[RMDB]
RNA sequence: GGGAACGACUCGAGUAGAGUCGAAAAGAGACUCGGGAACGCCUAGCAUCUGAGGGACGAAGCCGCCCCCGGGCGCUCCCCUCGGAGGUCCACUGGGUGGGUUCACAUCCCCAACCCGCGGGCCGGCAAACGUCACUCUUCGGAGUGACGAAAAGAAACAACAACAACAAC
Reactivity to 2A3 in 0.01 (KOAc 150mM, MgCl2 10mM, bicine 150mM(pH8.5), 24C), signal-to-noise 6, nucleotides 027 to 129: g080a000g010a010c000u010c030g010g000g010a070a050c070g020c030c010u050a040g060c020a060u010c010u040g010a040g020g010g000a020c070g080a060a010g060c120c030g040c010c020c000c020c010g010g010g010c010g030c000u010c000c000c000c000u000c000g000g000a010g020g010u030c000c010a050c140u130g000g000g000u010g000g010g010u110u100c110a060c010a170u170c000c000c000c000a090a220c000c010c000g010c010g000g000g010c000c000g000g000c020a060a030a020
Reactivity to DMS in 0.01 (KOAc 150mM, MgCl2 10mM, bicine 150mM(pH8.5), 24C), signal-to-noise 5, nucleotides 027 to 129: g040a080g030a050c030u050c000g000g000g030a070a050c050g020c030c000u010a020g050c160a150u010c020u000g010a000g000g000g000a010c130g010a110a240g030c080c030g030c060c030c020c030c160g010g030g050c050g000c050u000c050c030c030c000u010c020g010g040a060g020g000u020c030c020a000c060u050g040g020g000u010g010g020g030u000u000c250a120c040a160u050c060c010c010c010a040a050c000c000c000g000c030g000g000g000c010c000g000g040c070a080a040a080
This 170-nucleotide RNA was probed chemically with 2A3 and DMS.
The RNA was probed in 150 mM KOAc, 10 mM MgCl2 and 150 mM bicine (pH 8.5) at 24 C.
2A3 adducts were read by reverse transcription with SuperScript II with manganese.
The DMS profile rests on 16,089 reads.